[RMDB]
RNA sequence: GGGAACGACUCGAGUAGAGUCGAAAAUGCUCACCUUUCCCCCAACACCUUCUUCCCCGGUGCCUCCCAGGUGUCGAUGCUGAAGGGCUAAGUCCUUUGAAGGAAGGGUCAUACUAUGUAAGGAAGGAUAUGCUAAUGUAUUCGUACAUUAGCAUAUAAAAGAAACAACAACAACAAC
Reactivity to 2A3 in 0.01 (KOAc 150mM, MgCl2 10mM, bicine 150mM(pH8.5), 24C), signal-to-noise 9, nucleotides 027 to 126: u120g010c020u020c040a060c010c010u020u030u040c010c010c000c010c010a030a030c030a060c040c000u030u030c010u040u030c020c010c010c000g020g020u030g020c010c010u060c020c030c010a010g010g010u020g010u030c030g030a040u090g020c030u040g030a050a040g010g010g020c020u090a080a050g050u060c010c000u050u060u100g090a070a030g040g020a020a030g020g010g000u010c010a030u070a150c060u140a060u250g070u120a070a030g060g050a040a030g050g020
Reactivity to DMS in 0.01 (KOAc 150mM, MgCl2 10mM, bicine 150mM(pH8.5), 24C), signal-to-noise 9, nucleotides 027 to 126: u010g010c050u010c050a140c040c020u000u000u000c010c010c010c050c060a090a100c150a100c030c010u000u000c050u000u000c030c020c030c070g010g010u000g010c030c010u000c040c040c060a120g010g020u000g010u000c040g010a090u010g010c050u010g000a070a050g010g010g000c060u010a080a120g000u010c010c010u000u000u010g010a130a070g000g010a050a040g000g000g010u000c080a070u010a080c110u010a080u010g010u010a070a080g000g000a060a060g000g000
Source: RMDB libraries RFM100 and RFMREP, as collected in RNAgym. An RNA of 177 nucleotides, treated with 2A3 and DMS and read out base by base.